[RMDB]
RNA sequence: GGGAACGACUCGAGUAGAGUCGAAAAUUACAGGUUUCAAAUCUUGCUUUUAAUUAUUAAUACGAGGGUGAGUGGUAUUGUUUAUUAAGUAAUUUUAGUCUGACUGCACCUCAGUUAAGUCAUCUGUAAAAUGGAGACAAUGAUAAUACCUCACAGAAGUAUGAUACUGAUUCGUCAGUAUCAUACUAAAAGAAACAACAACAACAAC
Reactivity to DMS in 0.01 (KOAc 150mM, MgCl2 10mM, bicine 150mM(pH8.5), 24C), signal-to-noise 2, nucleotides 027 to 156: u000u010a110c040a090g020g020u000u010u000c060a050a080a100u000c030u010u000g000c010u000u010u000u020a110a170u000u000a180u020u000a060a140u000a080c070g010a080g040g010g020u010g000a040g030u000g010g010u000a050u000u000g000u000u030u000a040u040u000a070a180g000u010a040a070u000u000u000u010a090g010u000c030u010g010a120c030u010g010c050a200c090c080u000c060a070g010u000u020a050a120g010u000c020a060u000c030u000g020u000a020a010a090a060u000g000g010a140g020a060c060a070a090u000g010a040u000a060a070u000a050c030c000u010c020a050c040a190g010a110
Reactivity to 2A3 in 0.01 (KOAc 150mM, MgCl2 10mM, bicine 150mM(pH8.5), 24C), signal-to-noise 3, nucleotides 027 to 156: u170u100a070c040a020g070g020u050u060u150c060a100a130a080u030c020u040u060g000c010u070u120u090u090a070a080u040u160a070u080u110a090a050u130a110c060g030a080g010g080g010u050g040a040g010u050g000g050u020a030u040u040g030u060u100u030a070u040u050a100a060g020u040a040a120u070u070u060u050a070g040u020c050u020g010a020c000u020g010c050a100c010c050u080c020a010g010u020u060a090a000g000u020c010a060u040c150u020g050u100a040a090a030a100u040g100g000a020g000a030c010a020a020u020g010a000u000a010a030u020a050c000c040u010c010a050c010a050g110a080